[RMDB]
RNA sequence: GGGAACGACUCGAGUAGAGUCGAAAACGAACAGGACUGCGAGAAGAUGUUCGACUGGAUCUUGCACAACCGCGAUGUGUUCCAGAUGAGCUACGUGGAGAUUGGACACAAUUACUCGGUGGCCAAGGACCCAUUACACGUUCGCGUGUAAUGGGUCAAAAGAAACAACAACAACAAC
Reactivity to DMS in 0.01 (KOAc 150mM, MgCl2 10mM, bicine 150mM(pH8.5), 24C), signal-to-noise 2, nucleotides 027 to 126: c060g000a020a140c030a060g000g030a130c110u000g010c070g000a130g000a050a070g000a150u000g000u000u000c010g000a170c070u010g010g020a060u000c090u000u000g010c080a110c060a040a080c050c090g000c070g030a110u000g020u000g000u020u000c030c010a070g000a120u020g000a090g000c050u000a070c060g000u010g010g000a070g000a190u000u000g020g000a060c090a070c010a050a040u030u000a040c080u000c070g010g030u000g000g000c070c020a040a110g000
Reactivity to 2A3 in 0.01 (KOAc 150mM, MgCl2 10mM, bicine 150mM(pH8.5), 24C), signal-to-noise 2, nucleotides 027 to 126: c000g030a000a000c020a040g050g100a060c000u100g040c090g060a060g000a080a060g070a090u090g010u000u070c010g000a000c060u000g000g050a020u030c040u060u080g040c050a030c000a100a180c100c010g070c070g080a130u070g040u000g080u130u070c000c000a080g010a110u070g040a060g000c040u090a080c090g030u090g040g030a080g010a120u010u070g020g020a020c000a000c000a060a060u100u040a080c040u030c080g040g010u010g030g020c020c010a010a030g070

This 177-nucleotide RNA was probed chemically with DMS and 2A3. DMS (dimethyl sulfate) methylates the pairing face of unpaired adenines and cytosines. For 2A3 the reverse transcriptase was SuperScript II with manganese.